RNA sequence: GGGAACGACUCGAGUAGAGUCGAAAAGAUAUGGAGCUAGAACUACCGACAGCAAUGCUAGUCCGACGAUCUUUCUCGGAAACGAGAAAGGGAGGACAAACAUUGCUGUCGGCUAGCUCCUAAGUCAGAUCUAGGGGUAGUUCGCUACCCCUAGAUCAAAAGAAACAACAACAACAAC
Reactivity to DMS in 0.01 (KOAc 150mM, MgCl2 10mM, bicine 150mM(pH8.5), 24C), signal-to-noise 1, nucleotides 027 to 126: g050a020u000a300u040g010g000a010g030c000u000a000g000a170a050c050u020a300c000c000g000a010c000a010g000c000a040a020u000g000c000u020a300g080u010c010c020g050a230c300g000a050u020c000u000u010u020c000u000c010g000g010a080a080a220c000g000a030g020a000a000a000g000g000g020a020g100g020a010c020a020a050a090c000a000u000u000g000c000u000g010u010c000g000g000c000u000a000g000c000u020c000c000u000a050a020g020u000c040a200
The record gives the reactivity of an RNA of 177 nucleotides to DMS. The data come from the RNA Mapping Database (RMDB), library TTRINS.